[RMDB]
RNA sequence: GGGAACGACUCGAGUAGAGUCGAAAACGGCAUUUCCCCAGCAGCCAUGACCUACCAGGCUGCGGUGCGGCUCGCCGCACAGGUCAUCCCUCCUCGGGCGCGUCCUGCGUCCUUCCACGCCAACCCAAGACCAUUGCUUCCUUCGGGAAGCAAUGAAGUGAAUAACCAACUUCGGUUGGUUAUUCACAAAAGAAACAACAACAACAAC
Reactivity to 2A3 in 0.01 (KOAc 150mM, MgCl2 10mM, bicine 150mM(pH8.5), 24C), signal-to-noise 1, nucleotides 027 to 156: c050g060g000c060a100u030u040u090c000c000c000c000a060g010c000a000g000c000c040a250u140g010a020c020c000u080a120c110c040a010g000g000c000u010g010c020g000g020u020g010c000g010g010c030u080c230g200c000c000g000c010a000c000a020g050g010u090c040a190u200c000c020c020u110c010c000u030c010g000g020g000c000g010c000g020u230c030c110u100g020c000g020u000c000c050u010u000c050c010a070c000g000c030c000a100a060c030c000c000a050a000g030a100c030c030a040u000u000g020c000u010u010c010c000u030u050c020g120g010g000a000a000g000c000a000a000u000g000a000a020

Overview: The record gives the reactivity of an RNA of 207 nucleotides to 2A3. Values cover nucleotides 27 to 156. It was measured as part of the RMDB library M2RFPK. The RNA was probed in 150 mM KOAc, 10 mM MgCl2 and 150 mM bicine (pH 8.5) at 24 C.